[RMDB]
RNA sequence: GGGAACGACUCGAGUAGAGUCGAAAAUAGUUUUCCAGGCCAGGCAAAAGAUUAAGACACAUUUUUGAUCUUCCAUGUGGGAUUAGGCCUGAAUUAGCUCUAUUUGUUAAGGGACUUGAUUUCAUUGUGGAUCCACUUGCUGAGUUAGGAAGAAAUAGAUCAUGCGUAAUUUCGAUUACGCAUGAUCAAAAGAAACAACAACAACAAC
Reactivity to 2A3 in 0.01 (KOAc 150mM, MgCl2 10mM, bicine 150mM(pH8.5), 24C), signal-to-noise 3, nucleotides 027 to 156: u070a000g030u000u000u040u090c030c000a020g050g000c010c010a030g040g000c020a100a070a040a020g010a050u090u080a020a010g070a020c050a040c040a220u040u050u060u080u120g030a030u020c010u050u000c030c010a040u040g000u040g040g060g000a010u020u090a020g040g000c000c000u020g020a020a070u020u020a030g010c010u040c050u120a190u130u240u090g060u040u050a030a030g040g000g080a170c030u010u050g000a020u040u030u060c050a030u030u170g020u050g020g050a040u070c040c010a030c040u020u060g000c010u010g000a020g120u040u030a020g020g020a010a010g020a030a070a030u090a040
Reactivity to DMS in 0.01 (KOAc 150mM, MgCl2 10mM, bicine 150mM(pH8.5), 24C), signal-to-noise 2, nucleotides 027 to 156: u000a080g000u000u000u020u000c000c010a110g030g040c040c010a160g000g040c020a050a060a080a100g000a060u000u020a050a060g020a100c110a110c120a100u000u000u000u000u000g010a100u000c000u010u010c020c010a090u000g010u000g000g010g010a070u000u000a040g020g050c010c010u000g040a050a070u010u000a060g010c020u010c110u000a130u000u000u000g010u010u000a050a110g040g030g030a040c030u000u000g030a070u000u000u010c020a080u000u020g080u010g020g000a050u010c050c050a100c150u010u000g000c030u000g030a180g020u010u000a080g000g030a090a080g010a060a050a070u010a190